[RMDB]
RNA sequence: GGGAACGACUCGAGUAGAGUCGAAAAUAUAAGCACUAAAUUGUUUAAUCCUUUUCAGGAGGAAAUGUUUGUCCUUGCAUUUCCUUCUGGUCCUUAUUAUUUGUACGCCGGAUAGAAAAUUUGGUGUACCGUUAAUUAUGUUCGCAUAAUUAACGGUAAAAGAAACAACAACAACAAC
Reactivity to DMS in 0.01 (KOAc 150mM, MgCl2 10mM, bicine 150mM(pH8.5), 24C), signal-to-noise 3, nucleotides 027 to 126: u020a110u020a120a150g010c010a020c040u010a040a030a040u000u000g000u000u000u010a090a080u010c050c020u010u000u010u010c010a010g010g000a000g000g000a010a000a000u000g010u000u010u020g000u010c040c060u010u020g000c000a010u000u000u000c000c000u000u000c000u000g010g010u010c070c030u000u010a100u020u020a110u030u020u010g010u000a030c030g050c140c090g010g000a020u000a150g010a030a060a030a020u010u000u000g000g020u000g010u000
Reactivity to 2A3 in 0.01 (KOAc 150mM, MgCl2 10mM, bicine 150mM(pH8.5), 24C), signal-to-noise 9, nucleotides 027 to 126: u270a010u050a030a030g020c000a000c030u080a050a020a040u040u020g060u080u120u050a070a080u040c020c000u060u100u130u170c000a000g000g000a000g000g020a000a000a010u020g040u080u140u130g120u080c030c030u020u030g000c000a000u000u000u000c000c000u000u000c000u000g000g010u020c010c010u090u160a160u130u090a140u100u300u150g050u030a030c030g030c040c020g010g010a010u030a050g180a070a090a020a020u020u010u010g010g000u010g020u020

This 177-nucleotide RNA was probed chemically with DMS and 2A3. It was measured as part of the RMDB libraries RFM100 and RFMREP. For 2A3 the reverse transcriptase was SuperScript II with manganese. Reactivities are rounded to 0.1 and cut off at 0 and 3.